[RMDB]
RNA sequence: GGGAACGACUCGAGUAGAGUCGAAAAUUACACUGAUUUCUCACCCCCAUUCUCCGUCACCUCCUCUGACGCGGAAACUCUGUGUGACUCAGGCUGACCCCAUUGUCACUGUAAAGACCAACAGCAGGAUGGGUCAAGAAUUCGUUCUUGACCCAUCAAAAGAAACAACAACAACAAC
Reactivity to DMS in 0.01 (KOAc 150mM, MgCl2 10mM, bicine 150mM(pH8.5), 24C), signal-to-noise 2, nucleotides 027 to 126: u000u000a100c180a070c090u000g000a160u000u000u000c000u050c020a300c050c020c010c020c050a140u010u000c020u000c050c050g020u010c010a070c060c030u010c030c000u000c070u000g000a060c080g030c180g030g000a100a060a080c030u000c040u000g010u020g020u000g000a070c100u010c050a100g000g000c070u000g000a190c090c020c000c070a090u020u010g020u010c040a060c040u010g010u000a020a050a070g000a060c060c070a060a050c050a050g000c080a120g020